[RMDB]
RNA sequence: GGGAACGACUCGAGUAGAGUCGAAAACCUGGAGAGGUCUUCUGCCCUAGCCCGGUCUUCGAAGCUUCCUUUGGCUACUACCCGGUGGAAACAACUGAAGCUUCAACGCCUUUUUUUCCAAUCUUCUUUAGCACCGGGCUAGGGAGUAAGCCCGUGGGAUGACAAUCUAGUUCGCUAGAUUGUCAUCAAAAGAAACAACAACAACAAC
Reactivity to 2A3 in 0.01 (KOAc 150mM, MgCl2 10mM, bicine 150mM(pH8.5), 24C), signal-to-noise 2, nucleotides 027 to 156: c000c000u040g010g140a300g050a080g050g000u050c040u150u030c070u140g270c000c000c000u000a050g000c000c020c000g000g000u000c040u180u200c300g000a010a000g000c000u000u010c010c010u020u020u010g100g040c020u070a020c010u120a130c040c000c050g040g030u040g000g080a190a230a100c000a030a000c000u000g020a000a000g000c000u040u000c010a020a030c020g060c000c030u020u090u020u090u100u140u120c120c080a190a300u100c060u300u040c040u150u300u130a040g010c090a000c010c000g010g000g020c000u000a000g000g000g000a010g000u000a000a010g000c000c000c000g050u060g020g110